[RMDB]
RNA sequence: GGGAACGACUCGAGUAGAGUCGAAAAAUUGAUAAACGGCACCUAUAAGGUGGUGCCGAACCAGCGUGACCUACCAACACGCAACGAGCAGUCUGGUAUGACUGCAAAGCUAUGGUAAACAAGAUAAGAUGUGGAACAGAUUCGUCUGUUCCACAUCAAAAGAAACAACAACAACAAC
Reactivity to DMS in 0.01 (KOAc 150mM, MgCl2 10mM, bicine 150mM(pH8.5), 24C), signal-to-noise 1, nucleotides 027 to 126: a130u000u010g000a150u000a070a050a180c000g000g010c000a000c000c000u000a130u000a110a190g010g060u000g000g000u000g000c000c020g010a060a020c030c080a080g010c050g040u020g000a030c050c070u010a020c000c010a220a060c030a020c020g020c000a170a060c170g000a300g000c000a000g000u000c000u040g020g020u000a030u010g000a010c000u010g010c000a010a030a070g020c160u010a160u030g000g000u000a010a170a070c240a010a080g000a090u000a080a130
Reactivity to 2A3 in 0.01 (KOAc 150mM, MgCl2 10mM, bicine 150mM(pH8.5), 24C), signal-to-noise 1, nucleotides 027 to 126: a000u130u100g010a040u160a130a140a050c020g000g000c010a000c010c010u130a080u080a300a080g170g040u030g020g000u000g000c000c010g010a000a010c000c000a000g010c000g010u000g080a120c010c020u020a070c000c010a070a010c020a000c020g000c000a000a030c050g000a010g010c030a000g000u000c010u150g120g140u300a080u270g020a010c000u010g010c030a000a070a000g000c020u060a020u100g000g000u060a090a080a070c050a160a050g050a140u170a090a060

Description: This 177-nucleotide RNA was probed chemically with DMS and 2A3. For 2A3, 1,128 sequencing reads were counted. DMS adducts were read by reverse transcription with MarathonRT. The reactions ran in a buffer of 150 mM KOAc, 10 mM MgCl2 and 150 mM bicine (pH 8.5), at 24 C.